The record gives the reactivity of an RNA of 177 nucleotides to DMS and 2A3. It was measured as part of the RMDB library TTRDES. For 2A3, 2,091 sequencing reads were counted.
RNA sequence: GGGAACGACUCGAGUAGAGUCGAAAAAAAGAUAUGGAUGUAGAACUACAAGCUUGAGCUCAACAGCGAGGCUCGGAAACGAGCCUCGACAUGAGCAAGAUGAGGCUUGCUACAUCCUAAGUCAAAAGGAGUAAUAGAGGUUCGCCUCUAUUACUCCAAAAGAAACAACAACAACAAC
Reactivity to DMS in 0.01 (KOAc 150mM, MgCl2 10mM, bicine 150mM(pH8.5), 24C), signal-to-noise 2, nucleotides 027 to 126: a080a080a130g020a030u000a300u000g000g000a010u010g010u000a030g010a140a060c140u030a300c010a010a000g040c010u000u000g010a150g000c000u000c000a060a100c300a200g010c010g000a020g000g030c000u000c010g040g000a080a080a140c010g020a020g000c000c000u000c000g010a040c020a190u010g000a000g000c010a060a150g010a290u010g020a120g010g010c020u020u000g010c010u010a010c000a000u000c020c000u000a040a130g000u010c030a020a070a130a090
Reactivity to 2A3 in 0.01 (KOAc 150mM, MgCl2 10mM, bicine 150mM(pH8.5), 24C), signal-to-noise 2, nucleotides 027 to 126: a000a030a060g090a050u140a080u170g010g000a000u010g000u020a020g000a190a110c140u240a070c300a000a020g000c010u010u030g020a020g000c010u000c020a080a150c040a200g080c030g000a020g020g000c020u020c030g010g040a020a050a020c010g010a010g010c000c000u010c000g000a000c000a040u100g010a000g020c000a000a010g100a050u300g300a030g200g000c000u000u030g000c000u010a000c010a000u010c000c010u010a050a030g030u000c000a060a060a060a140

For DMS, 1,635 sequencing reads were counted.
Values are in units of 0.01, from 0 to 300, in steps of 10.